This 177-nucleotide RNA was probed chemically with 2A3. The reactions ran in a buffer of 150 mM KOAc, 10 mM MgCl2 and 150 mM bicine (pH 8.5), at 24 C. It was measured as part of the RMDB library OK1LIB. For 2A3 the reverse transcriptase was SuperScript II with manganese.

RNA sequence: GGGAACGACUCGAGUAGAGUCGAAAAUAUUGCUGUCAUACCUGCCACAGCGGCAAAACUAGUUCCUUCUAUUACUGGUAUUUUAGCACCUACAAUAUUUCCUAUACCAACACUUUGUAUGAGUGUUCGGCUCAUUAGUCUUCGGACUAAUGAGCCGAAAAGAAACAACAACAACAAC
Reactivity to 2A3 in 0.01 (KOAc 150mM, MgCl2 10mM, bicine 150mM(pH8.5), 24C), signal-to-noise 1, nucleotides 027 to 126: u210a040u000u110g070c000u040g000u060c020a040u040a000c000c000u020g040c020c000a110c020a090g000c080g040g000c000a060a140a140a140c130u130a020g040u100u120c000c000u080u120c000u120a100u100u130a090c140u000g000g000u060a100u090u060u060u000a070g060c050a020c070c030u050a090c020a020a060u020a050u250u010u100c000c020u080a080u190a270c040c020a080a000c040a000c070u000u070u120g240u140a060u060g000a000g000u050g000u040u000